[RMDB]
RNA sequence: GGGAACGACUCGAGUAGAGUCGAAAAGUGCGGAGUGAAAUUCAUAGGAGCCUCUCCAUUAUGGAUGAACGCCGCGGUAGUCCGCGUAGUCGCGACGUAAACGUUCUGUGUUCGCGUUCAGGCCUCACCAGCGAUUUAGUUUCGACUAAAUCGCUGGAAAAGAAACAACAACAACAAC
Reactivity to DMS in 0.01 (KOAc 150mM, MgCl2 10mM, bicine 150mM(pH8.5), 24C), signal-to-noise 1, nucleotides 027 to 126: g000u020g020c010g000g020a020g010u000g000a170a090a020u000u000c010a010u030a080g030g000a040g010c300c250u020c010u000c000c020a170u000u010a040u010g000g000a030u000g020a230a030c040g040c010c010g020c010g100g000u000a290g010u010c040c010g040c100g020u000a060g010u010c000g040c050g000a030c100g040u010a030a000a070c060g010u010u000c130u010g020u020g010u000u000c060g000c070g010u010u030c110a130g010g000c020c010u030c120a140